[RMDB]
RNA sequence: GGGAACGACUCGAGUAGAGUCGAAAAAGACGUCGCUUUCGAGCGACGUCUGCCGGUGGCUGUAGUUUAGUGGUUAGAACACAACGUUGUGGCCGUUGAAACCUGGGUUCGAAUCCCAGCAGCCACACCACACUUCAGGAAACUUCGGUUUCCUGAAUUGUCAUGAUACUUUCGAGUAUCAUGACAAAAAAGAAACAACAACAACAAC
Reactivity to DMS in 0.01 (KOAc 150mM, MgCl2 10mM, bicine 150mM(pH8.5), 24C), signal-to-noise 3, nucleotides 027 to 156: a040g000a030c000g030u010c000g050c010u010u000u020c250g030a060g010c000g030a010c030g020u000c000u000g010c020c030g000g020u000g030g040c020u000g000u000a070g010u000u000u010a050g020u010g050g000u020u000a060g000a040a090c050a070c040a060a060c050g010u000u010g010u000g030g050c200c030g040u000u000g000a030a070a040c060c000u000g000g020g030u010u010c050g010a300a120u030c000c010c010a030g000c010a040g000c000c000a010c030a060c050c010a040c060a100c080u000u000c010a010g010g000a040a010a040c000u000u000c300g110g020u000u000u000c030c000u000g000a000a010
Reactivity to 2A3 in 0.01 (KOAc 150mM, MgCl2 10mM, bicine 150mM(pH8.5), 24C), signal-to-noise 2, nucleotides 027 to 156: a000g000a000c000g000u000c000g050c040u080u070u260c280g080a000g010c000g000a000c000g000u000c000u000g000c000c030g030g010u000g010g000c010u000g000u010a010g000u000u000u010a090g010u120g130g180u100u060a010g000a020a000c000a000c000a030a000c010g010u050u080g180u220g240g040c040c000g000u000u000g020a000a000a000c000c010u000g000g000g010u020u010c000g000a000a000u000c010c000c000a000g020c020a000g020c000c020a000c000a010c020c000a040c000a010c010u020u020c000a010g000g000a000a000a010c000u050u080c270g130g000u000u000u000c020c010u000g000a010a000

Chemical mapping of a 207-nucleotide RNA with DMS and 2A3. The reactions ran in a buffer of 150 mM KOAc, 10 mM MgCl2 and 150 mM bicine (pH 8.5), at 24 C. DMS adducts were read by reverse transcription with MarathonRT. Reactivities are given for positions 27 through 156.